The record gives the reactivity of an RNA of 207 nucleotides to 2A3. The RNA was probed in 150 mM KOAc, 10 mM MgCl2 and 150 mM bicine (pH 8.5) at 24 C. Reactivities are rounded to 0.1 and cut off at 0 and 3.
RNA sequence: GGGAACGACUCGAGUAGAGUCGAAAACGUACGUGGAGACACGUACGACGAGACUUCGGUCUCGAAUCGCAUGAACUUGGGCCAUGCGCGCGCGAGGCGUCGGUGCUCGGCUAGCGCACGGACGCAAAAACUCGCGCGUAAAUAAAUAGCUUAAGAAGGUCCAUAUCGAUUUCGAUCGAUAUGGACCAAAAGAAACAACAACAACAAC
Reactivity to 2A3 in 0.01 (KOAc 150mM, MgCl2 10mM, bicine 150mM(pH8.5), 24C), signal-to-noise 2, nucleotides 027 to 156: c010g000u010a010c000g000u010g000g030a080g010a030c000a000c020g000u000a000c000g000a000c000g000a000g000a000c010u070u170c300g170g000u000c000u000c000g010a050a050u030c010g000c000a010u010g020a140a180c020u000u000g000g030g000c000c000a000u000g000c010g000c000g000c000g000c010g020a010g020g020c000g010u000c130g130g010u000g000c030u020c080g150g060c230u150a070g000c020g000c030a020c040g040g000a010c010g000c000a200a120a050a010a020c000u000c000g000c020g000c000g000u000a000a000a000u010a000a000a010u170a010g000c030u020u020a000a000g050a010a090